[RMDB]
RNA sequence: GGGAACGACUCGAGUAGAGUCGAAAACAUAAGCGCGUGUACAGGCUUUAUCACCUCAGUGGCCUGGGCGUAAAACGCAGAAGACGUCGUAAAGGGCUGGCAACAGAACGUCUCCCGCUGCUCCGUCCCAUCAAAGACUUUUCGAAGUCUUUGAUGGAAAAGAAACAACAACAACAAC
Reactivity to DMS in 0.01 (KOAc 150mM, MgCl2 10mM, bicine 150mM(pH8.5), 24C), signal-to-noise 5, nucleotides 027 to 126: c060a130u000a090a090g010c060g030c020g020u010g030u000a140c060a040g010g000c030u000u000u000a080u000c090a080c080c070u000c110a100g020u000g010g010c010c010u000g020g000g010c030g010u010a050a040a080a130c100g000c030a090g010a090a060g000a040c050g000u000c060g010u000a050a080a120g010g000g000c030u000g000g000c110a080a070c060a060g020a070a060c050g010u000c040u010c010c020c040g020c050u010g000c030u000c060c050g000u000c110
Reactivity to 2A3 in 0.01 (KOAc 150mM, MgCl2 10mM, bicine 150mM(pH8.5), 24C), signal-to-noise 5, nucleotides 027 to 126: c030a070u200a160a070g030c030g000c010g060u060g040u090a060c020a020g020g000c000u090u080u080a190u140c060a070c040c030u060c080a060g030u040g070g000c010c000u000g000g030g000c010g010u060a070a080a000a020c060g000c030a020g050a100a010g040a030c020g000u060c010g030u100a070a070a070g050g030g000c040u020g000g000c040a070a020c010a090g090a080a010c020g010u010c020u010c030c010c000g040c030u040g000c010u020c020c010g070u070c010